[RMDB]
RNA sequence: GGGAACGACUCGAGUAGAGUCGAAAAGAACGAAACUUCGGUUUCGUUCAAAUAAUGCGUAGCUCGCGCUACGCAGGCAACGAGUAGGUCGUGGCACCUACAAAAGAUUUUAGUUCGCUAAAAUCAAGAAGUGUUACCUGUUCGCAGGUAACACUUCAAAAGAAACAACAACAACAAC
Reactivity to DMS in 0.01 (KOAc 150mM, MgCl2 10mM, bicine 150mM(pH8.5), 24C), signal-to-noise 1, nucleotides 027 to 126: g000a000a020c000g000a010a010a040c000u000u010c180g040g030u010u000u000c000g010u000u000c000a010a080a090u030a110a040u000g000c000g000u000a010g000c000u000c300g000c300g000c030u000a000c000g040c030a000g000g000c050a040a030c010g040a140g020u000a020g000g000u000c020g020u010g000g040c080a050c000c000u000a020c020a080a030a110a080g000a000u000u000u000u000a000g000u000u020c240g020c000u000a000a010a010a020u000c000a150a080
Reactivity to 2A3 in 0.01 (KOAc 150mM, MgCl2 10mM, bicine 150mM(pH8.5), 24C), signal-to-noise 1, nucleotides 027 to 126: g010a000a000c000g000a010a000a010c040u060u080c160g070g000u000u000u010c000g000u000u000c000a000a000a000u060a030a030u000g000c000g000u000a000g000c020u000c080g090c040g000c070u000a000c000g000c000a010g010g040c000a020a070c030g030a020g020u010a000g010g030u020c100g210u240g180g010c130a000c020c000u020a000c000a000a060a000a010g030a000u000u020u020u020a030g010u010u010c160g000c160u030a000a000a000a040u040c040a000a010